[RMDB]
Structure probing data (2A3 and DMS) for a 207-nucleotide construct. The DMS profile rests on 1,533 reads. The reactions ran in a buffer of 150 mM KOAc, 10 mM MgCl2 and 150 mM bicine (pH 8.5), at 24 C. It was measured as part of the RMDB library OK3TST. The 2A3 profile rests on 963 reads.
RNA sequence: GGGAACGACUCGAGUAGAGUCGAAAAAGUAUUGAAACAAAGUUGCAUAUAAGAAGUAACCUUUUCCUGUUUAGUGGAGAAGACAGAUAAUCACAGGAUCUCACCAAGGCGGUUGCAGAGGAAGAGACAAAAUGCUGGGGGAGCCCAGAUGAGGUUGACCUCACAUAGUUUUCGAACUAUGUGAGGUAAAAGAAACAACAACAACAAC
Reactivity to 2A3 in 0.01 (KOAc 150mM, MgCl2 10mM, bicine 150mM(pH8.5), 24C), signal-to-noise 2, nucleotides 027 to 156: a010g160u150a140u110u140g010a050a040a010c030a010a180a030g040u030u060g010c100a010u150a010u060a220a130g100a090a010g020u050a040a020c000c000u010u010u050u060c010c020u010g060u100u170u160a080g010u120g050g050a030g000a020a000g050a030c030a040g080a060u140a060a030u140c030a040c000a140g000g030a030u010c020u020c030a030c020c020a050a030g100g000c040g100g030u070u110g030c050a020g030a000g050g020a000a070g040a000g030a060c040a010a090a020a030u050g010c020u020g020g000g010g000g020a020g020c000c000c030a020g020a060u110g050a010g010g080u080u170g060
Reactivity to DMS in 0.01 (KOAc 150mM, MgCl2 10mM, bicine 150mM(pH8.5), 24C), signal-to-noise 1, nucleotides 027 to 156: a050g060u010a050u000u010g040a140a110a020c020a000a110a220g030u000u000g000c000a060u000a080u000a140a090g000a100a130g020u000a030a080c070c020u000u000u000u000c010c030u010g000u000u000u000a120g000u020g020g020a030g030a060a080g010a160c070a110g020a150u000a020a110u000c060a030c070a100g020g010a100u000c000u000c050a100c090c020a030a270g040g030c080g060g030u020u010g060c070a130g010a190g050g010a100a060g000a070g010a140c050a030a120a070a110u010g020c010u020g030g000g010g020g030a070g000c020c000c020a070g070a040u000g020a070g050g010u000u010g010